[RMDB]
RNA sequence: GGGAACGACUCGAGUAGAGUCGAAAAACAGCUAGUAGGUAGUAGGGCUGGACAUGAACUAGGUCUGGCACAGUCCCUGCUCUUAACCACUGCACUAUUUUGCUUUUCUAGCCAAAGAGCAGACAAAAGUAGCGCUUCUAGAGCAUCUUGAUAUGUACCCGAGAAAGGAUUUCGAUCCUUUCUCGGGAAAAGAAACAACAACAACAAC
Reactivity to DMS in 0.01 (KOAc 150mM, MgCl2 10mM, bicine 150mM(pH8.5), 24C), signal-to-noise 1, nucleotides 027 to 156: a070c000a110g010c020u000a050g030u160a060g020g040u000a070g020u000a000g030g010g030c000u010g000g020a130c040a140u010g030a040a210c120u010a140g000g000u000c030u000g010g000c030a070c010a070g000u020c050c010c010u010g000c000u000c020u010u000a060a100c030c040a130c070u000g020c040a130c040u000a000u000u020u000u000g010c000u000u000u000u000c020u010a140g000c040c100a160a060a080g020a040g000c000a060g000a060c160a060a080a030a110g000u010a100g040c020g000c100u010u010c100u000a130g000a050g080c000a030u000c050u000u000g010a170u010a060u010g020u010a190
Reactivity to 2A3 in 0.01 (KOAc 150mM, MgCl2 10mM, bicine 150mM(pH8.5), 24C), signal-to-noise 3, nucleotides 027 to 156: a020c040a020g070c040u070a030g010u000a030g070g050u040a020g030u010a020g000g050g030c010u000g020g020a030c030a080u140g060a090a120c110u070a120g120g060u040c040u050g030g020c170a010c030a060g090u190c000c010c000u000g000c000u000c020u040u040a050a020c020c020a060c090u040g030c060a010c050u050a050u030u110u060u030g020c000u030u070u060u010c030u070a040g020c000c000a110a070a010g040a010g000c050a020g050a080c070a040a100a010a030g020u020a030g000c010g000c000u070u000c040u100a050g020a020g080c020a010u070c020u070u070g030a050u060a020u270g020u050a070